[RMDB]
The record gives the reactivity of an RNA of 207 nucleotides to 2A3. The reactions ran in a buffer of 150 mM KOAc, 10 mM MgCl2 and 150 mM bicine (pH 8.5), at 24 C. For 2A3 the reverse transcriptase was SuperScript II with manganese.

RNA sequence: GGGAACGACUCGAGUAGAGUCGAAAACUGCAGGUCAACGGAGUGUCUUCAGAUCAGCUAUUGCAGAAGAAAGGUCAGCCAAGCGCUCUGGGCCUAUUCGACUGUAUAUAGGAGCUUCUGAUUUCAACCAGAAGCUAACUCUCUCCGAAACAAUGAGAAUAGGUAUGACCUUCGGGUCAUACCUAUUAAAAGAAACAACAACAACAAC
Reactivity to 2A3 in 0.01 (KOAc 150mM, MgCl2 10mM, bicine 150mM(pH8.5), 24C), signal-to-noise 1, nucleotides 027 to 156: c030u040g040c060a030g170g000u050c050a100a040c150g000g020a000g010u110g000u040c030u080u110c040a020g030a300u060c070a020g030c020u000a010u050u000g000c000a000g010a010a010g030a000a020a000g010g000u010c010a000g000c020c000a260a030g140c150g040c140u040c070u170g100g010g000c050c000u080a300u010u000c000g000a000c000u000g030u040a110u020a000u020a250g040g140a000g010c000u010u000c000u010g120a170u260u300u300c020a040a020c030c000a000g000a000a000g010c000u000a010a010c010u000c020u030c000u000c030c050g070a100a070a030c120a050a150u180g010a110g090